RNA sequence: GGGAACGACUCGAGUAGAGUCGAAAAACAACACGCUUCGGCGUGUUGUCGACGGAGGAAGCAGAGGACGCGCUUGUGCCGCAGCAGGGAAGCGCAGCGUAAAUCAGAGGUGAUUCGUCACCUCUAAUGAUGUGGAUAACUUCGGUUAUCCACAUCAAAAAGAAACAACAACAACAAC
Reactivity to DMS in 0.01 (KOAc 150mM, MgCl2 10mM, bicine 150mM(pH8.5), 24C), signal-to-noise 4, nucleotides 027 to 126: a030c000a000a010c000a000c000g010c000u000u020c210g010g010c000g030u010g000u000u010g010u010c050g010a080c080g010g020a090g000g000a100a070g010c070a070g010a060g020g000a100c120g010c050g000c030u000u010g030u000g020c030c030g000c050a060g000c080a060g000g000g000a110a040g000c070g020c040a050g010c080g010u000a040a080a060u010c150a030g010a010g020g010u010g010a030u000u000c160g010u010c000a010c010c000u000c000u010a020a050
Reactivity to 2A3 in 0.01 (KOAc 150mM, MgCl2 10mM, bicine 150mM(pH8.5), 24C), signal-to-noise 2, nucleotides 027 to 126: a000c000a000a010c000a000c010g010c000u050u060c230g170g000c000g020u000g000u010u000g010u010c010g020a030c040g000g020a040g060g030a070a020g060c060a010g030a030g110g050a020c040g050c000g010c060u120u140g040u080g010c020c000g060c030a040g020c050a030g000g050g020a040a000g010c010g000c030a000g030c040g060u090a040a050a060u120c070a000g000a000g020g000u000g020a020u040u020c160g000u020c020a000c000c000u020c000u010a010a010
This 177-nucleotide RNA was probed chemically with DMS and 2A3. Source: RMDB library M2PK50, as collected in RNAgym. For DMS, 5,238 sequencing reads were counted. The 2A3 profile rests on 3,369 reads. Conditions: 150 mM KOAc, 10 mM MgCl2 and 150 mM bicine (pH 8.5), 24 C.